[RMDB]
RNA sequence: GGGAACGACUCGAGUAGAGUCGAAAAGAUAUGGAUGUAGAAGCUGCGCACUGGAUGCCUAAGACAGGUACUCGGAAACGAGUACUCGAGGCAUCCAGUGCGAACUACAGCGGCUACAUCCUAAGUCGCCUAAUAGGAUCUUCGGAUCCUAUUAGGCAAAAGAAACAACAACAACAAC
Reactivity to DMS in 0.01 (KOAc 150mM, MgCl2 10mM, bicine 150mM(pH8.5), 24C), signal-to-noise 1, nucleotides 027 to 126: g020a080u000a300u000g000g010a000u000g020u000a000g000a060a010g040c010u000g020c010g030c010a010c000u000g020g010a000u000g000c000c020u000a200a120g020a190c300a040g000g060u000a010c000u000c000g000g000a090a140a140c000g000a050g060u000a020c000u000c000g000a010g000g020c000a000u000c010c000a020g000u000g000c040g020a000a010c080u000a300c000a000g000c000g030g000c020u000a000c030a000u000c000c000u000a040a090g040u000c060